Chemical mapping of a 177-nucleotide RNA with DMS and 2A3. The reactions ran in a buffer of 150 mM KOAc, 10 mM MgCl2 and 150 mM bicine (pH 8.5), at 24 C.

[RMDB]
RNA sequence: GGGAACGACUCGAGUAGAGUCGAAAAGAUAUGGAAUCAUGGCCAGCGACGAUCAUGUGACUCGGAAACGAGUCCAUGGGAGCUGGUGAUUCCUAAGUCAAAACUUAGGACCUUCGGGUCCUAAGAAGUUCCUCAACAGGUUCGCCUGUUGAGGAACAAAAGAAACAACAACAACAAC
Reactivity to DMS in 0.01 (KOAc 150mM, MgCl2 10mM, bicine 150mM(pH8.5), 24C), signal-to-noise 1, nucleotides 027 to 126: g000a020u010a050u010g000g000a040a020u000c000a080u000g070g030c300c000a020g010c000g010a150c300g000a010u000c000a000u000g040u020g030a000c000u000c010g010g010a020a020a020c000g030a020g010u000c000c020a000u020g000g020g000a000g040c010u000g000g000u000g000a000u000u000c010c000u000a000a090g020u000c000a120a080a160a180c020u000u000a020g000g020a010c000c000u000u020c300g040g030g060u000c000c000u030a000a000g010a120a180
Reactivity to 2A3 in 0.01 (KOAc 150mM, MgCl2 10mM, bicine 150mM(pH8.5), 24C), signal-to-noise 1, nucleotides 027 to 126: g000a030u010a000u050g010g000a010a000u010c030a010u080g300g300c300c020a040g000c010g300a300c050g010a140u010c000a020u000g170u200g010a000c010u020c000g030g000a000a020a020c010g000a040g000u000c000c000a010u000g040g000g010a000g000c010u040g000g020u000g000a000u010u000c000c010u010a000a000g000u010c030a000a030a120a190c000u010u000a010g010g000a000c000c000u090u090c300g160g030g000u070c000c010u000a000a000g000a000a020

The data come from the RNA Mapping Database (RMDB), library TTRDES.